An RNA of 170 nucleotides, treated with DMS and 2A3 and read out base by base. The RNA was probed in 150 mM KOAc, 10 mM MgCl2 and 150 mM bicine (pH 8.5) at 24 C. Values are in units of 0.01, from 0 to 300, in steps of 10. The 2A3 profile rests on 107,273 reads.
RNA sequence: GGGAACGACUCGAGUAGAGUCGAAAAUUCCAUUGACCCACUGCUCGAGGACGUCCUCCCUGUCUCCUCGGUUCUUCUUCGAUCCGGACCGGCUCAUCUCGGCAAGAGGCGGCAGUCCUCAGUGCUCCACCAUCCAACUUCGGUUGGAUGAAAAGAAACAACAACAACAAC
Reactivity to DMS in 0.01 (KOAc 150mM, MgCl2 10mM, bicine 150mM(pH8.5), 24C), signal-to-noise 9, nucleotides 027 to 129: u020u020c150c170a110u000u040g000a040c000c020c050a140c050u010g020c020u000c020g020a000g020g020a200c110g000u020c010c050u010c010c000c000u020g020u000c040u000c000c030u020c010g010g020u040u020c040u000u030c070u030u030c080g000a100u030c000c000g050g000a100c100c040g000g010c000u000c000a080u020c030u010c000g020g030c080a110a090g010a080g000g010c090g000g000c080a060g010u010c030c010u020c060a030g000u010g020c010u030c000c030a080c140
Reactivity to 2A3 in 0.01 (KOAc 150mM, MgCl2 10mM, bicine 150mM(pH8.5), 24C), signal-to-noise 9, nucleotides 027 to 129: u150u030c050c010a030u020u110g020a020c020c020c030a080c040u020g000c000u000c010g000a010g030g080a200c010g020u030c000c000u040c000c000c000u020g040u010c030u020c010c010u010c020g030g000u070u020c020u090u010c010u050u080c060g100a110u020c020c010g020g010a050c010c010g020g000c010u010c020a090u010c030u010c020g030g010c040a070a040g030a020g040g000c000g040g030c020a010g050u070c000c000u030c020a050g030u030g060c010u010c030c000a050c020